[RMDB]
RNA sequence: GGGAACGACUCGAGUAGAGUCGAAAAGAUAUGGAAGACUACCCACCUCUACUCUUGCAUCGAUCUCUAAGCUUCGGAAACGAAGCUUAGAGGGAGCAAACGUGAGUAGAGAGGUCUUCCUAAGUCACAAAACUAGAAAGUUCGCUUUCUAGUUUUGAAAAGAAACAACAACAACAAC
Reactivity to 2A3 in 0.01 (KOAc 150mM, MgCl2 10mM, bicine 150mM(pH8.5), 24C), signal-to-noise 3, nucleotides 027 to 126: g050a130u300a200u300g020g000a010a020g010a010c010u180a250c020c000c020a030c010c000u010c000u000a000c000u030c010u070u080g030c030a270u300c210g100a090u020c000u000c000u010a000a010g000c000u000u000c000g020g000a030a090a100c000g000a000a010g000c000u000u010a000g000a000g000g020g000a020g000c000a050a120a120c180g300u230g080a010g000u000a000g020a000g000a000g000g020u000c000u000u010c000c000u010a050a020g040u000c030a020
Reactivity to DMS in 0.01 (KOAc 150mM, MgCl2 10mM, bicine 150mM(pH8.5), 24C), signal-to-noise 5, nucleotides 027 to 126: g010a130u010a200u010g000g020a020a010g010a010c010u000a150c020c020c050a300c150c000u000c000u000a010c000u010c000u010u000g020c020a300u010c210g000a100u010c010u000c010u000a000a010g000c000u010u000c000g000g000a100a110a230c000g000a010a010g010c000u000u010a000g000a010g010g000g000a090g030c040a030a080a130c250g030u010g000a020g010u000a010g020a060g000a070g020g010u000c000u000u000c000c000u000a020a060g010u000c170a220